[RMDB]
RNA sequence: GGGAACGACUCGAGUAGAGUCGAAAACAGGGGGCGCCAGUUCUCUCCGCGCUCCCGCGUGGCUGGCCCCUGAUGGUCUUAGACCUCAAGGAUUGCUUCUUUUCUAUCCCUCUUGCGGAACAAGAUCGGAUACGAUGUCAUUCGUGACAUCGUAUCCAAAAGAAACAACAACAACAAC
Reactivity to 2A3 in 0.01 (KOAc 150mM, MgCl2 10mM, bicine 150mM(pH8.5), 24C), signal-to-noise 5, nucleotides 027 to 126: c040a000g000g020g010g030g030c100g040c020c010a030g020u090u010c080u000c010u020c040c000g010c010g010c010u070c040c020c010g010c030g030u020g020g020c030u020g010g020c010c000c000c000u030g020a090u160g010g000u020c000u060u070a050g030a050c000c000u010c050a030a030g010g040a110u070u120g040c020u050u050c000u060u120u050u010c040u050a090u050c020c000c000u020c020u020u020g040c070g050g010a060a030c010a010a040g020a090u120c090
Reactivity to DMS in 0.01 (KOAc 150mM, MgCl2 10mM, bicine 150mM(pH8.5), 24C), signal-to-noise 2, nucleotides 027 to 126: c100a140g020g000g000g000g050c050g020c010c090a100g000u010u020c060u000c070u010c120c110g020c000g030c000u000c050c060c070g020c060g040u000g000g000c050u000g000g010c030c000c000c030u010g000a060u000g020g010u000c030u000u040a140g000a180c000c010u000c050a080a030g000g010a090u030u000g000c010u000u000c040u000u000u000u010c030u050a070u010c010c000c000u000c030u010u030g010c110g000g000a060a170c080a020a080g000a030u010c140